[RMDB]
RNA sequence: GGGAACGACUCGAGUAGAGUCGAAAAUAUAAUGCCAGUACUGGUGUAAUUGAAAUUUCGCCAGGUUCGUAAAGUGGUUAGGCAAGUGUUGUGUGCCCUGUGUUUAAGUACUGGUGGUUCCGUCCACCUCUUAAAUUGCUUUCGAGCAAUUUAAGAGAAAAGAAACAACAACAACAAC
Reactivity to 2A3 in 0.01 (KOAc 150mM, MgCl2 10mM, bicine 150mM(pH8.5), 24C), signal-to-noise 4, nucleotides 027 to 126: u220a000u010a050a080u150g010c010c000a020g000u030a010c000u020g000g010u050g030u130a030a050u050u110g230a130a110a130u060u060u020c010g000c010c000a010g000g060u020u100c050g030u090a030a080a080g030u080g060g100u190u090a090g010g030c060a060a040g060u040g040u150u030g020u000g030u050g030c010c040c010u000g050u000g030u110u110u110a080a070g010u070a020c020u010g000g000u010g050g020u080u040c010c000g010u010c040c010a080c020
Reactivity to DMS in 0.01 (KOAc 150mM, MgCl2 10mM, bicine 150mM(pH8.5), 24C), signal-to-noise 9, nucleotides 027 to 126: u030a090u020a080a070u010g000c010c000a040g000u010a050c010u000g000g010u010g010u010a030a040u010u020g020a100a140a150u010u000u000c020g010c010c010a040g000g000u010u010c100g010u020a060a070a100g010u000g010g010u010u010a070g000g010c040a050a070g010u010g010u000u000g010u000g020u010g010c010c010c030u010g010u000g010u000u010u010a070a070g000u010a030c020u000g000g010u000g000g010u000u010c040c030g010u010c030c040a070c110